An RNA of 207 nucleotides, treated with 2A3 and read out base by base. Conditions: 150 mM KOAc, 10 mM MgCl2 and 150 mM bicine (pH 8.5), 24 C.
[RMDB]
RNA sequence: GGGAACGACUCGAGUAGAGUCGAAAAAUACAUACUGACAUCGGUUGCUCAACAGGCUGUGUGGGACAAUAGAAUAACAAGGCUGUCAAUUUGAGCUUGACGGCUGCAAACCGAAUGGAGUGAAAUCGUAACCGGACUCACUUCGGUGAGUCCGGAACCACUGUGUGUUCUUCGGAACACACAGUGGAAAAGAAACAACAACAACAAC
Reactivity to 2A3 in 0.01 (KOAc 150mM, MgCl2 10mM, bicine 150mM(pH8.5), 24C), signal-to-noise 1, nucleotides 027 to 156: a000u230a030c020a060u140a050c020u050g040a020c070a010u000c020g040g040u050u080g020c010u010c120a090a080c020a080g130g000c030u030g070u010g010u090g040g050g000a030c050a000a130u080a270g090a090a080u060a050a060c030a030a000g070g010c000u010g010u000c020a030a030u050u120u300g030a010g070c000u000u000g000a030c000g000g000c040u080g030c080a020a030a090c000c000g050a030a020u030g010g010a000g000u140g110a050a140a020u090c080g030u010a000a070c000c000g020g000a000c000u000c000a020c000u000u070c100g050g000u000g020a000g070u000c000c000g000g010a000a000
The 2A3 profile rests on 485 reads. For 2A3 the reverse transcriptase was SuperScript II with manganese. The data come from the RNA Mapping Database (RMDB), library M2RFPK.